[RMDB]
RNA sequence: GGGAACGACUCGAGUAGAGUCGAAAAUGUUUGAAGAUUACCAGGGAAAAAGUCUAUCUACCCUGCAAGAUUAUUAAGGCUUGAACUAAAGAGCGGUCGUUUUGCAUGGAAGAUCCCAAAUGAACGCAGAAUAUUAAUAAGGUAAUACCUGACAUCACAUUAAAUGCAUGUUCGCAUGCAUUUAAUGAAAAGAAACAACAACAACAAC
Reactivity to DMS in 0.01 (KOAc 150mM, MgCl2 10mM, bicine 150mM(pH8.5), 24C), signal-to-noise 5, nucleotides 027 to 156: u000g000u000u010u000g030a090a110g010a110u000u010a080c060c010a090g010g030g010a100a070a090a090a130g020u000c070u000a140u000c040u000a150c020c010c020u000g000c030a050a060g010a090u000u000a070u000u000a060a130g050g010c010u000u010g010a090a150c130u000a040a100a210g000a080g050c020g020g020u000c030g020u000u000u000u000g000c010a070u020g000g020a130a090g000a140u000c030c000c010a060a060a070u000g010a050a050c090g010c040a100g010a090a100u000a100u010u000a040a110u000a100a080g010g010u000a040a090u000a100c030c030u000g020a060c080a080u000c030a190
Reactivity to 2A3 in 0.01 (KOAc 150mM, MgCl2 10mM, bicine 150mM(pH8.5), 24C), signal-to-noise 6, nucleotides 027 to 156: u040g020u010u040u090g070a100a030g010a070u030u050a030c030c040a050g010g010g020a020a070a060a070a050g070u050c050u070a100u010c000u040a110c010c010c010u000g010c010a020a000g000a040u040u040a030u090u130a240a060g130g000c000u030u040g030a100a050c030u100a250a080a030g030a010g010c030g010g030u020c010g000u000u000u010u060g000c010a010u080g000g010a020a020g020a040u030c000c010c010a020a100a040u120g020a060a010c050g000c090a020g070a180a040u110a050u220u150a090a090u130a180a030g020g000u010a050a010u050a140c010c020u030g010a010c020a050u070c040a030